[RMDB]
RNA sequence: GGGAACGACUCGAGUAGAGUCGAAAACUAGCCUUCUGUUCCCCAGAAUGUGACUUUGUCUCCCAUGAAGACAAUCCCAGCAACUGGAGAGGAAGCUGGCUAGGUGAACACAACCUUGUGAUUGUCACCUGCUAUUAUAAUUCGUUAUAAUAGCAGGAAAAGAAACAACAACAACAAC
Reactivity to DMS in 0.01 (KOAc 150mM, MgCl2 10mM, bicine 150mM(pH8.5), 24C), signal-to-noise 9, nucleotides 027 to 126: c020u000a050g000c010c010u000u000c010u000g010u010u000c020c020c030c030a040g010a100a070u000g010u000g000a080c140u000u000u000g010u000c030u000c030c100c200a170u010g010a100a050g000a020c010a010a020u000c030c040c040a160g010c070a060a250c010u000g000g010a090g010a140g010g010a070a130g000c050u000g000g010c080u000a010g000g010u000g000a100a090c130a070c110a060a070c040c050u000u000g010u000g000a120u000u000g000u010c100a170
Reactivity to 2A3 in 0.01 (KOAc 150mM, MgCl2 10mM, bicine 150mM(pH8.5), 24C), signal-to-noise 9, nucleotides 027 to 126: c000u000a000g010c010c000u020u020c020u090g120u080u060c020c000c000c000a010g040a110a110u070g040u040g040a080c040u070u090u070g020u010c020u020c030c090c040a130u180g090a100a020g000a000c010a010a050u210c020c030c000a010g000c010a020a050c020u020g000g020a230g020a050g160g010a030a010g000c010u010g010g010c010u010a000g010g030u050g100a130a020c060a010c020a110a090c020c020u050u090g070u040g070a140u060u080g050u050c010a020

The record gives the reactivity of an RNA of 177 nucleotides to DMS and 2A3. DMS adducts were read by reverse transcription with MarathonRT. It was measured as part of the RMDB library OK2TST. For 2A3 the reverse transcriptase was SuperScript II with manganese.